[RMDB]
RNA sequence: GGGAACGACUCGAGUAGAGUCGAAAAGAAAAAUCAGGCUGUUCUUUGGUGGGGAAGGACAUAAACAUCCAUCAAGUUCAUAAAAAUUCUCUGCGUUUUGUCCAGUUUGAGAAUGCAUGAUAAUACAUAUGUUUUCAGACCUUUUUUAAGUAGCAAAGAGUACCAUUUACUUCGGUAAAUGGUACUCAAAAGAAACAACAACAACAAC
Reactivity to DMS in 0.01 (KOAc 150mM, MgCl2 10mM, bicine 150mM(pH8.5), 24C), signal-to-noise 1, nucleotides 027 to 156: g000a020a050a110a200a070u000c040a090g020g020c000u000g010u000u000c060u010u020u000g030g050u000g010g000g080g000a140a090g030g000a070c080a090u010a060a100a090c050a110u000c010c020a040u000c020a030a140g010u000u000c080a090u010a040a100a070a100a080u000u000c020u020c030u000g010c020g000u020u020u010u010g000u020c030c040a180g020u000u000u030g030a000g000a030a010u000g000c090a010u000g020a120u010a060a190u010a190c030a030u000a020u000g000u010u000u000u000c020a040g040a040c010c010u000u000u000u000u000u000a010a140g000u030a100g000c000a070a100a120
Reactivity to 2A3 in 0.01 (KOAc 150mM, MgCl2 10mM, bicine 150mM(pH8.5), 24C), signal-to-noise 2, nucleotides 027 to 156: g020a000a090a020a000a040u080c050a010g050g000c020u010g030u040u010c030u010u070u090g000g010u020g000g000g000g020a030a080g050g000a030c010a020u180a000a130a020c010a040u070c070c020a030u020c020a030a000g020u020u040c020a020u230a110a130a050a120a130u090u020c020u020c030u010g040c030g020u090u050u090u130g040u000c030c020a010g000u070u100u110g020a020g000a030a000u010g010c030a000u030g020a010u080a190a020u100a120c020a020u130a040u080g020u040u030u040u000c010a000g000a070c010c000u040u020u010u090u050u250a180a110g030u040a020g030c050a040a060a010